[RMDB]
Record summary:
An RNA of 177 nucleotides, treated with DMS and read out base by base. The reactions ran in a buffer of 150 mM KOAc, 10 mM MgCl2 and 150 mM bicine (pH 8.5), at 24 C. The DMS profile rests on 4,368 reads. It was measured as part of the RMDB library TTRDEL.
RNA sequence: GGGAACGACUCGAGUAGAGUCGAAAAGAUAUGGACUGUGGGAGCGUACACGUCGGAAACGACGUGGACGCUUUGAUCACAUCUGUCCUAAGUCAAAGUAAACCCUCGCUUCGGCGAGGGUUUACAAGCUAAAAUGUUACUUCGGUAACAUUUUAGCAAAAGAAACAACAACAACAAC
Reactivity to DMS in 0.01 (KOAc 150mM, MgCl2 10mM, bicine 150mM(pH8.5), 24C), signal-to-noise 4, nucleotides 027 to 126: g010a060u010a280u000g010g000a040c050u000g010u000g010g000g000a000g010c010g020u010a010c010a000c000g020u000c000g010g010a090a110a190c010g020a010c000g040u000g000g000a010c000g000c030u000u000u000g010a100u010c000a020c010a060u000c220u020g000u000c000c000u000a080a140g000u000c050a090a110a200g000u000a000a010a010c000c000c010u000c000g030c010u000u010c240g020g000c000g000a010g010g000g000u000u000u000a000c000a060a100